[RMDB]
RNA sequence: GGGAACGACUCGAGUAGAGUCGAAAAAAGCCCGGCUACCUGCGUCGCAGUCGCGAGCUGGACCCGGCUCUGGCCGUUCGCAUCCGUCGCGAGCUGAUCCAUGCGGAAGCCUCCGACUUGGCCAUGGAGUCCAUACGUAUUUCGAUACGUAUGGACUAAAAGAAACAACAACAACAAC
Reactivity to DMS in 0.01 (KOAc 150mM, MgCl2 10mM, bicine 150mM(pH8.5), 24C), signal-to-noise 4, nucleotides 027 to 126: a080a070g000c010c010c090g000g000c040u010a080c060c020u000g020c080g030u000c100g020c050a080g020u000c050g010c060g010a070g010c040u010g010g000a090c120c040c020g000g000c020u000c140u000g000g010c020c040g010u000u010c070g020c100a100u010c050c070g020u000c040g010c040g020a060g000c040u010g010a110u000c030c050a050u010g010c090g000g000a110a040g010c030c040u000c050c050g000a100c040u000u000g010g010c050c040a070u000g000g010
Reactivity to 2A3 in 0.01 (KOAc 150mM, MgCl2 10mM, bicine 150mM(pH8.5), 24C), signal-to-noise 3, nucleotides 027 to 126: a010a040g070c020c000c000g020g020c030u110a120c010c030u040g010c040g090u050c040g020c080a050g070u090c040g060c070g040a020g030c050u090g040g000a040c030c060c000g040g020c040u060c070u140g090g000c020c010g050u040u110c070g000c050a030u060c010c050g080u010c010g020c040g030a060g050c020u040g050a060u000c020c020a030u150g050c040g050g030a020a000g040c000c020u040c020c010g060a110c000u070u140g020g010c030c000a070u080g060g040